RNA sequence: GGGAACGACUCGAGUAGAGUCGAAAACAAGUGGCCUGAAGUGACCUGGCCAGCCAGUGGUCGUGCAUGGACCUGGGACCAGCCAGGGAAGGCGGGGGAGGCUCUUCCCGUAUAUCCAGCCCCAGGGCAUUUGCCCGAGGUUCGCCUCGGGCAAAUGAAAAGAAACAACAACAACAAC
Reactivity to DMS in 0.01 (KOAc 150mM, MgCl2 10mM, bicine 150mM(pH8.5), 24C), signal-to-noise 2, nucleotides 027 to 126: c130a120a070g010u000g020g020c010c000u020g020a090a110g040u000g010a140c040c010u000g010g040c030c050a110g010c020c030a060g010u020g010g010u010c020g020u000g020c250a080u000g020g000a080c040c010u010g010g000g000a130c140c080a120g020c050c040a030g000g000g000a080a050g010g010c030g030g000g020g000g010a070g000g000c050u010c080u000u000c000c000c010g010u020a070u010a120u000c040c060a110g000c040c000c030c030a130g020g000g010
Annotation: Structure probing data (DMS) for a 177-nucleotide construct. The data come from the RNA Mapping Database (RMDB), library OK2TRN. The RNA was probed in 150 mM KOAc, 10 mM MgCl2 and 150 mM bicine (pH 8.5) at 24 C.